RNA sequence: GGGAACGACUCGAGUAGAGUCGAAAAAGGGAUAACAACAGCACCCGCUUGAGACUAUUGGGUGGAUUGACUGAACUCAUCUAUGUAAAAUGCCCAGCACACAAUAAGCUUCAUCAGCUGUUAUAAUUAAGAUGAGGAAGCAGACGCAAAAAAGGCACAAAAUGCAGGUAUUCGUACCUGCAUUUUGAAAAGAAACAACAACAACAAC
Reactivity to DMS in 0.01 (KOAc 150mM, MgCl2 10mM, bicine 150mM(pH8.5), 24C), signal-to-noise 1, nucleotides 027 to 156: a090g000g010g000a190u000a070a120c020a090a150c080a070g000c050a120c040c010c030g000c100u010u000g010a080g050a100c130u020a130u010u010g000g050g010u010g000g010a090u000u020g020a080c030u020g010a080a130c060u000c050a060u000c030u000a110u000g000u010a000a090a080a210u030g000c050c030c020a090g030c020a020c020a120c050a020a100u010a040a110g030c040u010u000c040a110u000c040a050g000c000u010g000u000u010a100u000a100a100u010u010a060a050g010a030u000g000a020g020g010a030a030g020c040a000g020a050c270g020c030a000a000a030a040a040a040g010g010c000a150
Reactivity to 2A3 in 0.01 (KOAc 150mM, MgCl2 10mM, bicine 150mM(pH8.5), 24C), signal-to-noise 2, nucleotides 027 to 156: a000g080g000g010a120u080a130a030c090a010a010c010a010g020c040a030c030c020c000g050c090u060u160g040a080g010a050c110u110a170u190u160g000g010g000u040g030g010a030u050u080g030a070c010u030g050a050a050c020u020c070a040u030c050u100a070u080g160u180a060a120a040a020u060g020c010c020c000a030g070c060a010c010a010c000a060a110u100a190a000g010c020u050u010c010a070u040c040a000g000c010u020g040u130u050a100u070a110a100u140u010a020a000g000a020u010g000a000g020g000a030a000g010c000a010g010a050c030g030c100a030a020a000a000a000a100g010g000c040a010